[RMDB]
Chemical mapping of a 177-nucleotide RNA with 2A3 and DMS.
The RNA was probed in 150 mM KOAc, 10 mM MgCl2 and 150 mM bicine (pH 8.5) at 24 C.
For 2A3 the reverse transcriptase was SuperScript II with manganese.
DMS adducts were read by reverse transcription with MarathonRT.
Reactivities are rounded to 0.1 and cut off at 0 and 3.
For DMS, 1,776 sequencing reads were counted.
RNA sequence: GGGAACGACUCGAGUAGAGUCGAAAAGCUGUUGGAUAUGCGCGUCCAAGCAGUUAGGCCGGAAACGAGGAAAAUCCCGUUUCCAUCAAGGCGGAGCUGUGAUGGCGAGGGAAAUAUAGUACCGAAGCCUAACAUCGGAGUUCGCUCCGAUGUUAGGAAAAGAAACAACAACAACAAC
Reactivity to 2A3 in 0.01 (KOAc 150mM, MgCl2 10mM, bicine 150mM(pH8.5), 24C), signal-to-noise 2, nucleotides 027 to 126: g050c010u020g050u170u060g050g050a020u060a120u250g150c130g000c010g070u080c010c000a030a020g030c000a010g020u050u140a130g090g000c030c030g020g050a000a000a000c040g020a300g090g100a160a180a100a200u210c020c000c010g010u000u000u010c000c000a010u080c040a080a100g020g040c110g020g000a000g010c020u040g030u030g060a050u180g050g000c030g000a060g040g020g030a020a070a000u300a050u050a080g040u000a010c010c000g030a080a020g000
Reactivity to DMS in 0.01 (KOAc 150mM, MgCl2 10mM, bicine 150mM(pH8.5), 24C), signal-to-noise 2, nucleotides 027 to 126: g000c000u000g010u000u010g020g030a080u020a040u010g020c090g020c090g030u000c000c020a050a280g000c020a030g010u000u000a170g020g030c030c030g010g020a020a010a020c000g040a130g030g010a130a140a130a190u000c010c000c000g010u000u010u000c000c020a100u000c100a080a170g000g000c000g020g010a090g000c040u000g000u000g010a210u000g000g010c030g010a160g000g000g010a080a030a090u000a130u010a050g020u000a130c010c030g010a120a080g020